[RMDB]
RNA sequence: GGGAACGACUCGAGUAGAGUCGAAAAACAUUGGCCUUCGGGCCAAUGUACUGGAAAUAAAGCCGAAAGGCUACGCAUUCCUUAUUUGGCGAAAGCCUGCCAGAUUAUGUAAGUUCGCUUACAUAAAGUUUGCAGUCAUAUUCGUAUGACUGCAAACAAAAGAAACAACAACAACAAC
Reactivity to 2A3 in 0.01 (KOAc 150mM, MgCl2 10mM, bicine 150mM(pH8.5), 24C), signal-to-noise 2, nucleotides 027 to 126: a000c000a000u000u000g010g030c010c000u000u040c270g030g030g000c000c000a000a010u000g010u000a010c020u060g020g140a040a060a080u190a160a180a050g000c000c010g050a030a050a040g020g000c010u020a000c080g020c000a080u040u030c000c000u060u160a190u070u080u110g030g020c000g060a040a040a040g050c000c010u000g040c010c000a060g020a150u110u000a000u040g000u000a000a010g020u010u110c210g020c090u000u000a010c000a020u010a010a040a020
Reactivity to DMS in 0.01 (KOAc 150mM, MgCl2 10mM, bicine 150mM(pH8.5), 24C), signal-to-noise 2, nucleotides 027 to 126: a030c000a000u000u010g000g010c000c000u000u020c250g030g010g020c000c000a000a010u000g020u000a050c140u000g000g000a010a040a090u020a110a060a040g000c010c000g010a170a070a130g000g010c000u000a020c280g040c160a190u000u000c000c000u000u000a110u000u000u000g000g020c010g000a060a050a140g040c020c000u000g020c030c060a040g000a110u000u000a000u000g000u000a010a020g010u000u000c250g050c000u000u000a010c000a020u010a010a020a200